[RMDB]
RNA sequence: GGGAACGACUCGAGUAGAGUCGAAAACAGCAGUAGCUAGUGGCAUCAGUUACUGCUGUAAACCCGUAGAGUUCAGGAGAUUGGGGUCGGUGGCGGCGAGCAUGGCUGUGACAAAAUUGGAUGCCGCGAAAGGAGCUGAUUUCGAUCAGCUCCUUUCAAAAGAAACAACAACAACAAC
Reactivity to 2A3 in 0.01 (KOAc 150mM, MgCl2 10mM, bicine 150mM(pH8.5), 24C), signal-to-noise 2, nucleotides 027 to 126: c000a000g000c000a030g000u000a000g010c000u060a010g070u060g030g050c010a000u010c000a000g000u000u000a000c000u000g030c000u000g000u000a000a000a000c000c000c000g010u030a130g020a040g050u070u100c090a020g050g060a100g030a120u150u130g060g000g040g020u030c090g000g030u080g060g010c030g000g060c030g000a000g000c030a020u070g030g000c020u030g020u040g030a060c060a040a140a000a010u080u020g100g010a000u020g030c030c000g060c040
Reactivity to DMS in 0.01 (KOAc 150mM, MgCl2 10mM, bicine 150mM(pH8.5), 24C), signal-to-noise 2, nucleotides 027 to 126: c000a000g010c000a010g000u000a000g010c000u000a070g000u000g000g000c040a040u000c040a020g000u000u000a010c010u010g000c010u030g010u000a010a130a130c000c000c010g010u030a040g000a080g030u000u030c060a070g040g020a050g000a080u000u020g050g000g000g020u010c070g010g000u010g000g040c060g010g010c040g040a060g030c040a010u020g020g030c090u020g020u020g000a120c160a020a050a090a060u030u030g000g000a070u010g020c010c000g000c150